RNA sequence: GGGAACGACUCGAGUAGAGUCGAAAAGGCGCCUUUAGAAGAAGAGGCUAGGGGGUAUUCCGGUGUGGGAUACUUAGUAAUAUGCAACGCUAAUUGCAUAAGAUUGUAGGACGGAAUUUACAGUCUUUAGAGAUAAGCACGUUCGCGUGCUUAUCAACCAACACUAUAGUUUCGACUAUAGUGUUGGAAAAGAAACAACAACAACAAC
Reactivity to 2A3 in 0.01 (KOAc 150mM, MgCl2 10mM, bicine 150mM(pH8.5), 24C), signal-to-noise 7, nucleotides 027 to 156: g050g000c030g040c040c010u080u070u100a150g010a220a020g010a040a010g010a030g010g010c030u040a060g020g010g000g020g020u030a040u040u020c040c030g110g060u170g040u150g070g020g010a010u020a060c010u040u050a030g030u070a060a110u030a030u100g010c010a030a010c060g020c160u120a090a060u060u030g000c000a010u010a070a030g020a030u040u080g030u040a010g010g080a030c090g020g060a060a030u080u100u070a050c030a010g010u010c000u030u050u080a110g020a000g000a060u000a000a000g000c000a000c010g010u050u070c190g010c010g070u000g000c000u000u000a000u000c000a000a000
Reactivity to DMS in 0.01 (KOAc 150mM, MgCl2 10mM, bicine 150mM(pH8.5), 24C), signal-to-noise 2, nucleotides 027 to 156: g020g000c040g000c050c010u000u000u000a060g000a120a180g000a100a120g000a040g020g020c020u000a070g000g000g020g030g040u020a050u000u010c030c010g010g030u020g010u000g030g000g000a050u010a010c040u000u000a080g020u000a130a170u000a050u000g000c020a010a040c080g020c130u000a060a130u000u010g020c010a070u000a050a040g000a050u010u000g000u000a030g040g010a200c060g020g010a080a300u000u000u000a030c010a070g010u000c020u000u000u010a100g000a200g010a020u000a000a010g000c000a010c000g010u000u000c300g040c040g060u000g020c010u000u000a000u000c000a050a170